Structure probing data (DMS and 2A3) for a 177-nucleotide construct. For 2A3, 353 sequencing reads were counted. It was measured as part of the RMDB library OK1LIB. Conditions: 150 mM KOAc, 10 mM MgCl2 and 150 mM bicine (pH 8.5), 24 C.
RNA sequence: GGGAACGACUCGAGUAGAGUCGAAAAUAAAGGUGCUAAGAUUGGUACUGAUAGUACUAAGGACUGUCUAGAUAAGAAUAAGACAUCUUAUAAGGCUGUUGUGAACAGUCCCGACUUGACUUUCGGGGCACAAAGUCAGUUUCGACUGACUUUGUGCAAAAGAAACAACAACAACAAC
Reactivity to DMS in 0.01 (KOAc 150mM, MgCl2 10mM, bicine 150mM(pH8.5), 24C), signal-to-noise 1, nucleotides 027 to 126: u080a080a080a050g000g040u010g050c070u030a180a120g060a060u040u000g030g000u000a080c000u030g020a210u000a010g000u000a070c030u000a040a050g000g010a000c070u040g030u020c030u050a080g000a080u020a040a030g010a110a160u000a070a090g000a180c270a100u000c000u000u000a090u000a080a180g000g000c060u000g020u000u000g000u080g080a010a090c110a030g000u000c010c000c010g000a000c250u000u000g000a080c300u000u000u030c010g000g000g010
Reactivity to 2A3 in 0.01 (KOAc 150mM, MgCl2 10mM, bicine 150mM(pH8.5), 24C), signal-to-noise 1, nucleotides 027 to 126: u050a000a020a010g000g000u050g020c050u000a000a080g100a300u230u080g030g020u000a080c000u000g020a000u070a120g000u070a030c000u030a080a080g000g000a050c000u000g220u000c000u030a020g050a240u220a060a150g050a230a050u030a280a000g000a050c000a050u210c000u000u280a230u070a270a050g080g000c000u010g000u000u000g000u000g070a190a100c100a090g000u000c000c000c000g020a100c020u070u170g050a050c000u050u050u000c000g000g020g000